[RMDB]
RNA sequence: GGGAACGACUCGAGUAGAGUCGAAAAAUGCAGUUACUUUCAGAAAUGGAUGGGUUUGAUGAACGGGGCGAUGUUCGUAUUAUUGCAGCGACGAACAGAUUUGAUAUGCUCGAUGAAGCGAUUCUCCGCCCAGGUCGAUUUGACCGAUUGAUUGAGGGGGUAUAUUAACAUUCGUGUUAAUAUACCCAAAAGAAACAACAACAACAAC
Reactivity to 2A3 in 0.01 (KOAc 150mM, MgCl2 10mM, bicine 150mM(pH8.5), 24C), signal-to-noise 3, nucleotides 027 to 156: a000u040g000c000a010g020u050u050a050c060u030u110u110c100a040g070a130a210a060u140g030g030a010u040g060g030g000u030u140u070g040a040u020g040a070a010c060g000g000g000g000c010g020a030u070g000u010u030c000g010u040a060u170u100a110u060u230g110c060a030g030c040g050a010c000g000a040a000c010a020g090a120u090u120u240g040a050u070a020u190g050c030u030c040g040a110u090g080a050a020g030c000g010a020u100u000c020u030c010c030g010c010c000c010a010g030g000u000c010g070a170u040u070u260g020a000c040c000g010a010u040u110g020a080u010u130g060a070g000g070
Reactivity to DMS in 0.01 (KOAc 150mM, MgCl2 10mM, bicine 150mM(pH8.5), 24C), signal-to-noise 2, nucleotides 027 to 156: a100u000g000c030a060g020u000u000a070c040u010u000u000c020a110g010a090a100a130u010g030g020a050u000g020g010g030u000u000u010g010a080u010g020a080a070c030g030g010g030g010c060g010a090u000g010u000u010c010g020u000a090u000u010a150u000u010g020c110a110g040c030g040a070c010g020a010a030c020a070g010a230u000u010u000g020a100u000a110u000g000c030u000c060g040a060u000g020a080a110g030c030g000a180u010u000c010u000c050c020g010c010c000c030a070g040g000u000c000g030a240u000u000u000g000a060c010c040g000a150u000u000g010a150u000u000g010a160g000g020
The record gives the reactivity of an RNA of 207 nucleotides to 2A3 and DMS. The 2A3 profile rests on 1,096 reads. Conditions: 150 mM KOAc, 10 mM MgCl2 and 150 mM bicine (pH 8.5), 24 C. For DMS the reverse transcriptase was MarathonRT. The data come from the RNA Mapping Database (RMDB), library OK3TST.